[RMDB]
RNA sequence: GGGAACGACUCGAGUAGAGUCGAAAACGCGGUUGAUCUUAGAUAAAUAUAUUUCUUUUUCAUAAAGAAAGUGAGUGGAUCUUCCCUGGAAGUACGAAUAAUGUACUUAUGAUUAGAUUCUCUUCACAGCAGGAUUUUUAUUCGUAAAAAUCCUGCUAAAAGAAACAACAACAACAAC
Reactivity to 2A3 in 0.01 (KOAc 150mM, MgCl2 10mM, bicine 150mM(pH8.5), 24C), signal-to-noise 1, nucleotides 027 to 126: c000g050c090g020g000u000u140g000a140u000c030u020u070a060g020a210u140a160a210a000u210a060u010a060u040u150u000c010u220u000u000u060u120c120a200u290a150a040a000g050a050a090a070g010u040g040a000g010u090g000g000a000u000c000u030u000c000c020c020u050g160g090a000a000g000u000a000c000g020a150a250u250a180a100u300g000u000a050c070u000u110a060u070g100a110u020u070a000g000a050u000u000c000u020c000u150u120c070a090c000